[RMDB]
RNA sequence: GGGAACGACUCGAGUAGAGUCGAAAAUUGAGCCUUUUCUGUUUUCCAGCCAGACCCGGAAAAACGAAAACACAGCUCGGGGAGCCCCCACCAGCCGGCGCCUGUGCCAGCUCACCUCUGGCCAUGGUGUUUGCCAUACAUUCGUGUAUGGCAAACAAAAAGAAACAACAACAACAAC
Reactivity to 2A3 in 0.01 (KOAc 150mM, MgCl2 10mM, bicine 150mM(pH8.5), 24C), signal-to-noise 2, nucleotides 027 to 126: u050u080g020a010g010c000c000u000u040u020u000c010u010g040u010u030u000u040c000c010a030g000c030c020a070g090a210c000c020c040g040g050a030a070a020a060a040c020g030a020a050a070a000c080a020c020a040g010c010u020c000g020g020g000g010a020g050c000c000c020c000c000a030c000c020a020g040c010c000g040g010c010g020c000c000u060g040u120g020c000c010a000g030c020u010c000a060c010c050u040c030u010g010g020c000c020a070u120g030g000
Reactivity to DMS in 0.01 (KOAc 150mM, MgCl2 10mM, bicine 150mM(pH8.5), 24C), signal-to-noise 1, nucleotides 027 to 126: u000u010g010a100g010c000c120u020u000u000u010c020u010g010u020u000u000u000c000c020a110g010c060c060a100g000a130c070c070c060g020g000a060a050a040a090a060c090g000a060a030a060a020c070a130c120a060g000c030u000c010g000g010g010g020a110g010c090c030c010c060c050a030c070c130a100g030c090c060g000g000c020g050c000c000u000g000u000g010c000c000a000g000c060u020c190a060c080c090u020c020u000g000g020c020c010a060u020g000g000